[RMDB]
RNA sequence: GGGAACGACUCGAGUAGAGUCGAAAAGACUCUUACAAAGGGAUAGUUGUAGGAGAUUGCUUCACGAACUAUCCAUCUGCACGAUUCGUGAAGCAUGGUUGCCAAAUCGUGCAGUUAUUGGCAACAGUCACCAGUAUGAGUUCGCUCAUACUGGUGAAAAAGAAACAACAACAACAAC
Reactivity to DMS in 0.01 (KOAc 150mM, MgCl2 10mM, bicine 150mM(pH8.5), 24C), signal-to-noise 4, nucleotides 027 to 126: g010a140c000u000c000u000u010a010c010a030a060a120g010g030g010a100u000a030g000u000u000g010u010a010g000g010a030g000a160u010u000g000c020u000u000c010a030c050g010a030a110c290u000a060u000c040c050a060u000c030u000g000c020a020c020g000a070u000u000c050g000u000g000a050a040g010c060a020u000g020g010u010u010g000c010c000a060a040a080u000c030g010u010g010c020a030g000u000u010a090u010u000g000g000c040a020a030c020a160g000
Reactivity to 2A3 in 0.01 (KOAc 150mM, MgCl2 10mM, bicine 150mM(pH8.5), 24C), signal-to-noise 5, nucleotides 027 to 126: g020a000c010u010c000u020u040a010c020a000a030a030g210g050g070a130u110a090g080u010u030g030u050a030g020g040a040g000a140u070u150g040c010u030u030c020a020c080g050a120a030c050u050a110u080c020c030a030u010c010u020g010c010a020c040g060a060u050u060c050g020u060g060a030a000g010c010a010u040g080g020u010u010g020c000c000a010a040a030u040c030g000u020g010c000a010g000u030u080a130u080u090g020g000c000a010a010c020a030g060